[RMDB]
RNA sequence: GGGAACGACUCGAGUAGAGUCGAAAACUCGUUCACGGUUAAGUCUGUCUCUGGCAGAGCAGACCGUCAGGAGGAUGAGGUCACCAUCUUCACGAAGCCAAAGCCAAAUUCCGCCUUGUCCUGUAAAAUAUGAGGAGGACUUCGGUCCUCCUCAUAUAAAAGAAACAACAACAACAAC
Reactivity to DMS in 0.01 (KOAc 150mM, MgCl2 10mM, bicine 150mM(pH8.5), 24C), signal-to-noise 2, nucleotides 027 to 126: c000u000c030g020u020u000c020a030c020g030g030u000u000a050a300g000u000c030u000g020u000c010u040c060u060g000g050c090a050g010a000g000c100a100g010a050c030c000g020u000c120a050g000g000a040g010g020a000u000g000a050g000g010u060c050a080c080c030a030u020c020u020u060c060a050c040g000a040a130g010c040c030a020a140a140g010c010c060a060a150a210u070u000c000c040g020c010c010u020u000g000u070c000c000u040g000u010a020a030a100
Reactivity to 2A3 in 0.01 (KOAc 150mM, MgCl2 10mM, bicine 150mM(pH8.5), 24C), signal-to-noise 2, nucleotides 027 to 126: c020u020c040g120u190u030c030a000c010g030g050u020u090a100a000g040u020c000u010g080u070c020u000c060u300g040g020c050a020g000a000g080c000a010g020a010c000c000g050u020c020a140g010g140a020g010g000a040u030g010a040g030g070u080c050a030c040c020a060u090c000u090u090c030a040c080g020a030a000g050c040c050a070a010a000g010c000c000a090a130a000u040u000c020c000g010c000c000u040u050g020u000c000c010u000g080u110a120a000a000